Chemical mapping of a 177-nucleotide RNA with 2A3 and DMS. The 2A3 profile rests on 1,512 reads. The data come from the RNA Mapping Database (RMDB), library OK2TRN.
RNA sequence: GGGAACGACUCGAGUAGAGUCGAAAACCGCCCGGGCCCACUGUCUGGGCCGGAGCUGGCGGAUCCGGCGCGCAGUGUGUCGCUGGACGACUUCCCUGGGCAGGUCGUCGUCGUCAACGUGUGGGGGAUCCACACAGGGGUUCGCCCCUGUGUGGAUAAAAGAAACAACAACAACAAC
Reactivity to 2A3 in 0.01 (KOAc 150mM, MgCl2 10mM, bicine 150mM(pH8.5), 24C), signal-to-noise 1, nucleotides 027 to 126: c010c010g020c040c010c000g050g060g020c000c030c000a030c060u100g070u200c120u210g030g140g010c010c000g000g010a030g010c110u120g040g000c040g070g000a040u030c000c000g020g000c210g020c000g000c100a070g080u040g000u010g000u140c040g000c140u090g040g000a010c020g010a030c030u010u010c000c010c000u030g060g080g060c060a010g010g030u040c010g000u000c010g020u010c000g030u060c080a070a060c070g050u080g010u160g110g010g000g030g000
Reactivity to DMS in 0.01 (KOAc 150mM, MgCl2 10mM, bicine 150mM(pH8.5), 24C), signal-to-noise 2, nucleotides 027 to 126: c060c020g020c030c020c020g040g010g010c010c020c010a040c100u000g020u010c130u010g010g000g020c000c010g000g000a020g000c030u000g020g010c050g000g000a120u010c010c000g010g020c020g030c040g000c040a070g010u010g020u000g000u020c020g020c050u000g010g010a030c030g000a050c070u000u000c010c010c020u000g030g000g000c150a230g010g000u000c070g010u000c030g000u000c020g000u020c050a080a110c070g020u000g020u000g000g000g000g020g010
Reactivities are rounded to 0.1 and cut off at 0 and 3.